[RMDB]
RNA sequence: GGGAACGACUCGAGUAGAGUCGAAAAGAUAUGGACCUUCUCUUGCGCAAUUCGACCUGGAGUCGGACAUCGGAAACGAUGUUGCGACUAUGAAGGGUUCGAAUUGCGCAAGAGAAGGUCCUAAGUCCAUAAUGGGUGUGUUCGCACACCCAUUAUGAAAAGAAACAACAACAACAAC
Reactivity to DMS in 0.01 (KOAc 150mM, MgCl2 10mM, bicine 150mM(pH8.5), 24C), signal-to-noise 1, nucleotides 027 to 126: g000a100u000a300u010g030g020a000c000c000u010u000c010u000c010u000u010g030c040g000c020a040a040u000u000c000g000a040c000c000u000g000g000a010g010u000c000g010g000a000c000a000u000c010g010g000a170a130a270c010g020a000u000g000u000u000g020c000g010a040c000u010a120u000g010a140a230g000g000g000u010u010c000g020a010a010u000u000g000c020g030c000a000a000g000a010g010a010a000g000g020u000c000c000u000a000a030g010u000c060
The record gives the reactivity of an RNA of 177 nucleotides to DMS. For DMS, 2,662 sequencing reads were counted. Conditions: 150 mM KOAc, 10 mM MgCl2 and 150 mM bicine (pH 8.5), 24 C.